Source: RMDB library OK1LIB, as collected in RNAgym. This 177-nucleotide RNA was probed chemically with DMS and 2A3. DMS adducts were read by reverse transcription with MarathonRT. The DMS profile rests on 1,579 reads. Values cover nucleotides 27 to 126. 2A3 adducts were read by reverse transcription with SuperScript II with manganese.
RNA sequence: GGGAACGACUCGAGUAGAGUCGAAAAACGCAUCGACAAUUUCCAAAGGUUAUAUCACUACCUGCUCUUAUUGCUUUUAUUAGUUGAGUUACACCAAAGACACUAGAAUAACAAGAUGCGUAAGGGCAUCGGGAUGGAGGUUCGCCUCCAUCCCGAUAAAAGAAACAACAACAACAAC
Reactivity to DMS in 0.01 (KOAc 150mM, MgCl2 10mM, bicine 150mM(pH8.5), 24C), signal-to-noise 1, nucleotides 027 to 126: a030c020g020c060a000u000c000g000a100c180a140a200u030u000u000c000c000a050a100a010g010g000u010u000a060u010a060u020c090a090c040u020a060c000c020u000g020c000u000c030u000u010a000u030u000g060c000u050u000u040u110a030u000u020a050g010u010u030g000a170g000u010u010a080c010a140c110c120a020a100a140g020a070c060a110c000u000a030g000a050a070u000a000a050c150a100a080g000a000u000g000c000g000u000a000a050g000g010g010c050
Reactivity to 2A3 in 0.01 (KOAc 150mM, MgCl2 10mM, bicine 150mM(pH8.5), 24C), signal-to-noise 2, nucleotides 027 to 126: a000c040g000c080a080u150c010g140a120c000a040a050u010u010u010c000c000a000a000a210g010g000u220u030a130u000a040u300c020a000c030u110a060c010c020u000g000c000u000c000u000u000a030u120u170g000c000u020u000u040u220a160u090u000a070g070u000u070g020a050g000u080u180a030c030a010c000c100a050a000a050g120a000c060a000c030u080a000g030a100a110u080a090a000c080a010a000g190a150u030g000c000g100u000a000a030g040g000g010c040